[RMDB]
RNA sequence: GGGAACGACUCGAGUAGAGUCGAAAAUCGCACGGCGGCCAUGAGUCGCAACGCAAAGCCGCGGCAAGUGGAGUUAGCGAGAAGAGACUAGGCUUUGGUUUCUUCAAGUGAAGCGGUCACCAAUCAGAAUAGCUUGCGCAGUUCGCUGCGCAAGCAACUUGUUGCUAGUGUUCGCACUAGCAACAAGAAAAGAAACAACAACAACAAC
Reactivity to 2A3 in 0.01 (KOAc 150mM, MgCl2 10mM, bicine 150mM(pH8.5), 24C), signal-to-noise 1, nucleotides 027 to 156: u020c000g010c000a010c000g010g030c000g000g030c010c010a210u190g010a040g020u040c020g000c030a070a030c030g070c070a110a000a040g030c080c030g000c000g020g040c100a140a050g000u030g050g000a040g060u130u080a010g030c050g010a040g010a060a010g010a030g010a010c060u080a040g110g220c110u070u210u220g010g010u000u000u030c000u000u030c020a020a040g010u020g050a060a010g010c000g050g020u000c020a040c070c030a030a050u170c040a020g160a170a150u140a030g000c010u010u000g080c000g000c000a020g000u060u110c220g040c110u020g020c040g010c000a000a000g000c000a010a000

Chemical mapping of a 207-nucleotide RNA with 2A3. Conditions: 150 mM KOAc, 10 mM MgCl2 and 150 mM bicine (pH 8.5), 24 C. For 2A3 the reverse transcriptase was SuperScript II with manganese. Reactivities are given for positions 27 through 156. High 2A3 reactivity points to a flexible backbone, as in loops and unpaired stretches. Values are in units of 0.01, from 0 to 300, in steps of 10.